[RMDB]
RNA sequence: GGGAACGACUCGAGUAGAGUCGAAAAGAGACCGCAAUACCCGGAAGGUGGGAGAGAGUGGGAGAUUUGAGUAGGGUUGGAAUCGGCUACCUACACCCUCAUUGCAGUAGGUAAGGUUGUCAUGUACAGAGGGCUGAUCCUUUCUAGGUUGCAAAUGCAACUAACGAGAGUUCGCUCUCGUUAGUUGAAAAGAAACAACAACAACAAC
Reactivity to DMS in 0.01 (KOAc 150mM, MgCl2 10mM, bicine 150mM(pH8.5), 24C), signal-to-noise 1, nucleotides 027 to 156: g020a180g020a020c050c020g030c060a080a130u000a090c020c000c010g020g010a070a020g000g070u010g000g010g000a080g010a060g000a090g030u010g010g030g020a100g000a080u010u000u010g000a080g020u000a020g020g050g060u000u000g020g010a110a070u000c070g010g020c060u010a010c010c010u000a010c020a090c040c040c050u010c060a110u000u000g030c050a140g050u000a090g010g000u000a060a100g050g030u010u020g020u010c040a060u000g010u000a170c110a100g020a050g000g010g000c040u020g000a090u000c030c000u000u010u000c040u010a120g030g000u000u000g040c010a030a060a140u010g020
Reactivity to 2A3 in 0.01 (KOAc 150mM, MgCl2 10mM, bicine 150mM(pH8.5), 24C), signal-to-noise 3, nucleotides 027 to 156: g090a010g010a020c060c030g000c070a040a100u110a210c000c020c040g060g040a030a030g070g020u050g010g050g000a050g000a040g000a020g020u070g010g030g000a080g010a070u090u090u150g050a070g040u090a030g040g020g020u030u050g040g060a050a050u070c040g030g010c010u030a040c000c000u040a030c010a050c030c020c010u060c060a110u050u200g020c050a030g010u110a010g020g020u030a000a050g040g010u050u040g040u030c050a050u060g040u080a040c050a070g030a050g040g010g010c000u030g010a060u030c010c000u030u120u050c080u060a070g040g030u030u000g010c010a040a040a040u180g010

Structure probing data (DMS and 2A3) for a 207-nucleotide construct. The DMS profile rests on 2,327 reads. 2A3 adducts were read by reverse transcription with SuperScript II with manganese. Values cover nucleotides 27 to 156. The reactions ran in a buffer of 150 mM KOAc, 10 mM MgCl2 and 150 mM bicine (pH 8.5), at 24 C.